[RMDB]
RNA sequence: GGGAACGACUCGAGUAGAGUCGAAAAGAAUCCGGAAGUGUGGAUACCUGACGGGAAAGGGGUAGAAAUAAGCCGAAACACACGAAUAAGGCGAAUACACAUGAAAGAAGAAAAUGUGUAUGAAGAAGGGUUUUCUAAUGUUCGCAUUAGAAAACCCAAAAGAAACAACAACAACAAC
Reactivity to 2A3 in 0.01 (KOAc 150mM, MgCl2 10mM, bicine 150mM(pH8.5), 24C), signal-to-noise 3, nucleotides 027 to 126: g010a020a010u020c000c000g000g010a110a130g040u030g030u080g070g000a010u040a050c000c000u060g060a050c050g010g000g100a070a020a020g000g000g040g000u020a010g210a030a120a020u300a110a000g020c010c000g000a000a120a020c040a020c040a030c100g050a080a060u190a030a050g030g010c000g020a000a000u010a000c010a000c000a000u000g160a170a070a210g130a060a030g070a020a120a030a000u000g010u000g010u000a010u040g030a080a050g070a070a150
Reactivity to DMS in 0.01 (KOAc 150mM, MgCl2 10mM, bicine 150mM(pH8.5), 24C), signal-to-noise 2, nucleotides 027 to 126: g020a030a130u030c030c050g010g020a080a080g000u000g120u000g060g010a050u010a120c010c040u000g000a200c220g020g000g000a100a090a030g000g000g030g030u010a000g000a030a030a040u070a160a300g070c010c000g000a050a050a150c180a070c020a010c060g000a020a160u000a140a090g010g000c030g000a080a050u000a000c020a000c000a000u000g010a020a030a300g010a030a300g000a150a050a050a000u000g000u000g000u000a000u030g060a090a060g000a120a090

Notes: Structure probing data (2A3 and DMS) for a 177-nucleotide construct. For 2A3 the reverse transcriptase was SuperScript II with manganese. The DMS profile rests on 1,577 reads. DMS adducts were read by reverse transcription with MarathonRT.